The data come from the RNA Mapping Database (RMDB), library OK3TST. The record gives the reactivity of an RNA of 207 nucleotides to 2A3. 2A3 is a SHAPE reagent: it acylates the 2'-hydroxyl of flexible nucleotides of all four kinds. The reactions ran in a buffer of 150 mM KOAc, 10 mM MgCl2 and 150 mM bicine (pH 8.5), at 24 C.

RNA sequence: GGGAACGACUCGAGUAGAGUCGAAAACAUGAGAAAUACUUACUCACUACUUGUGUUUAUGAAACAUUAUGUGCCAGGCACUGGGCUGAGCAAUCCACACAGGUCAACUCGGUUAAUCCUCAUGACAACCCCUGAGAUAAGUACUUAUACCACCCUAGUGGGUAAUGACUUUCGAGUCAUUACCCACAAAAGAAACAACAACAACAAC
Reactivity to 2A3 in 0.01 (KOAc 150mM, MgCl2 10mM, bicine 150mM(pH8.5), 24C), signal-to-noise 2, nucleotides 027 to 156: c020a030u110g000a000g010a050a120a040u100a070c010u030u050a020c000u020c050a080c060u040a030c020u130u110g000u000g060u080u150u100a150u150g080a030a110a040c080a080u080u220a080u300g010u020g050c040c060a070g050g020c050a010c090u100g090g010g000c000u010g010a030g110c020a000a030u050c010c000a060c010a020c020a060g040g010u030c000a030a060c060u010c040g030g010u020u020a050a000u130c010c000u000c030a010u090g050a040c020a020a080c010c000c000c000u000g050a030g000a080u070a050a020g020u030a000c010u060u060a090u060a130c000c040a060c000c000c000u000a000